[RMDB]
RNA sequence: GGGAACGACUCGAGUAGAGUCGAAAAAUUAUCGACACGGGUUCGGUGGUACCAGGCCGAACUCACCGGGAGGCACCCGGCACCAUGCAGUAUACAGAGAUUAGGCAUAUACCAAGGCCUCUCAUAGAGGUCAGAUAAUUUUCGAAUUAUCUGACCUAAAAGAAACAACAACAACAAC
Reactivity to 2A3 in 0.01 (KOAc 150mM, MgCl2 10mM, bicine 150mM(pH8.5), 24C), signal-to-noise 7, nucleotides 027 to 126: a000u230u130a130u110c060g050a030c020a030c160g030g000g000u000u010c000g000g010u020g020g060u090a080c030c020a070g150g000c000c000g000a000a000c000u000c000a000c000c000g010g000g000a090g050g050c060a100c020c020c000g010g000c010a020c030c000a020u140g010c030a020g080u120a070u030a150c060a020g060a010g010a070u120u170a050g040g000c050a020u100a010u050a190c060c030a040a040g070g000c010c000u000c000u000c010a010u030a030g180
Reactivity to DMS in 0.01 (KOAc 150mM, MgCl2 10mM, bicine 150mM(pH8.5), 24C), signal-to-noise 7, nucleotides 027 to 126: a070u040u030a060u010c070g000a110c160a120c130g000g000g010u000u000c010g000g020u000g000g020u020a180c090c090a130g000g000c000c000g000a030a010c000u000c010a050c130c050g020g000g010a110g020g000c100a110c040c030c060g000g010c070a050c080c070a060u000g000c030a090g010u020a070u000a070c140a140g000a090g010a160u020u020a040g010g000c020a060u010a090u020a130c080c060a090a100g000g010c010c010u000c040u010c020a110u030a080g000
Structure probing data (2A3 and DMS) for a 177-nucleotide construct. 2A3 adducts were read by reverse transcription with SuperScript II with manganese. Reactivities are given for positions 27 through 126. It was measured as part of the RMDB libraries RFM100 and RFMREP. Conditions: 150 mM KOAc, 10 mM MgCl2 and 150 mM bicine (pH 8.5), 24 C.